[RMDB]
RNA sequence: GGGAACGACUCGAGUAGAGUCGAAAAUGUCCGUGGUAGGAGAGCGUUCUAAGGGCUGCGAAGCUAGACCGUAAGGACUGGUGGAGCGCUUAGAAGUGAGAAUGCCGGUAUGAGUAGCGAAAGAAGGGCGUUAGAUAAAGUUCGCUUUAUCUAACGCAAAAGAAACAACAACAACAAC
Reactivity to DMS in 0.01 (KOAc 150mM, MgCl2 10mM, bicine 150mM(pH8.5), 24C), signal-to-noise 6, nucleotides 027 to 126: u010g000u000c010c030g040u000g010g020u000a040g010g010a110g010a190g010c040g010u000u000c010u010a030a030g010g000g020c010u010g010c050g010a300a260g010c010u000a010g010a150c000c010g000u030a130a140g020g020a170c000u010g000g020u000g000g000a300g000c010g000c010u000u000a010g010a020a080g000u000g010a120g000a080a060u000g000c020c030g000g010u010a050u010g010a080g020u000a050g000c060g000a050a060a070g010a090a070g020g000
Reactivity to 2A3 in 0.01 (KOAc 150mM, MgCl2 10mM, bicine 150mM(pH8.5), 24C), signal-to-noise 3, nucleotides 027 to 126: u150g030u020c030c020g030u080g020g010u040a030g000g090a070g010a010g050c060g060u020u020c010u030a010a040g100g100g040c090u300g050c090g000a010a000g000c000u010a020g010a070c000c000g030u050a050a120g000g000a030c010u020g000g000u020g000g040a030g000c020g020c020u000u030a010g000a010a000g020u050g010a070g050a060a090u070g020c020c000g020g000u080a090u060g040a060g050u070a010g090c040g060a100a060a060g100a030a090g060g110